[RMDB]
RNA sequence: GGGAACGACUCGAGUAGAGUCGAAAACCGAAAAGGGAAGCCGGUUAAUAUUCCGGCACCGCUGCCCGCUGCCUUUAUGGCACCCGACGCCUCGGGAUAGGCCGGGCGGGAGCUGCCAGCCCGUCCACAUCAUGCACAGUUUCGACUGUGCAUGAUGAAAAGAAACAACAACAACAAC
Reactivity to DMS in 0.01 (KOAc 150mM, MgCl2 10mM, bicine 150mM(pH8.5), 24C), signal-to-noise 2, nucleotides 027 to 126: c000c000g010a050a030a090a080g000g000g010a140a170g030c010c000g000g000u000u030a150a160u030a200u010u040c030c000g000g020c020a030c020c030g040c090u010g000c010c030c020g000c080u000g020c030c000u000u020u010a100u050g000g000c000a070c040c000c020g030a090c210g000c090c030u020c020g040g000g010a150u020a030g010g040c030c100g000g000g000c000g000g000g020a030g000c040u000g010c030c030a080g000c000c000c010g010u010c000c080a190
Reactivity to 2A3 in 0.01 (KOAc 150mM, MgCl2 10mM, bicine 150mM(pH8.5), 24C), signal-to-noise 5, nucleotides 027 to 126: c020c010g010a080a060a010a040g040g010g010a150a030g000c000c000g020g020u090u060a150a070u070a120u210u060c010c000g000g000c000a010c000c020g000c020u050g070c000c000c000g030c040u030g030c020c000u120u220u190a140u230g010g000c000a010c010c010c000g030a040c060g110c000c050u020c040g020g030g030a050u090a070g050g030c020c020g010g000g000c000g000g010g000a030g020c070u070g040c000c000a030g010c020c010c010g010u010c010c010a050